[RMDB]
RNA sequence: GGGAACGACUCGAGUAGAGUCGAAAAAGCUAGGAGUAGAAACAGCAAGGAAACAGCAGGGAGCUGUUGACAACAGGACAGCAGAGGACCUCGGCAUGACUGCUGCAGACAAAGCAGACCUCACUGCUAUCCGCGUACUUUUCGAAGUACGCGGAUAAAAAGAAACAACAACAACAAC
Reactivity to 2A3 in 0.01 (KOAc 150mM, MgCl2 10mM, bicine 150mM(pH8.5), 24C), signal-to-noise 2, nucleotides 027 to 126: a000g070c080u100a020g000g110a050g000u110a060g030a090a130a070c050a000g020c050a020a150g100g000a150a020a040c060a100g050c010a050g100g050g000a010g000c010u000g000u110u010g050a040c030a070a010c000a070g010g180a020c000a020g000c030a010g020a050g070g100a090c000c000u030c000g010g000c040a060u140g040a070c010u020g010c000u000g030c050a010g020a040c040a010a100a050g020c000a000g010a090c030c000u000c030a020c000u000g000c010
Reactivity to DMS in 0.01 (KOAc 150mM, MgCl2 10mM, bicine 150mM(pH8.5), 24C), signal-to-noise 3, nucleotides 027 to 126: a030g010c020u000a010g030g010a030g000u010a050g000a250a080a020c060a080g000c040a130a150g000g030a180a070a080c060a020g050c100a130g010g000g030a100g010c020u000g000u010u000g010a150c230a140a100c230a060g000g000a070c040a020g000c040a070g010a110g000g000a040c130c090u020c080g000g010c070a080u010g000a090c030u000g000c020u010g000c060a030g000a100c110a020a060a030g000c010a020g000a070c140c030u020c050a070c000u000g000c040
Source: RMDB library OK1LIB, as collected in RNAgym. An RNA of 177 nucleotides, treated with 2A3 and DMS and read out base by base. For DMS, 2,731 sequencing reads were counted. Conditions: 150 mM KOAc, 10 mM MgCl2 and 150 mM bicine (pH 8.5), 24 C. For 2A3 the reverse transcriptase was SuperScript II with manganese.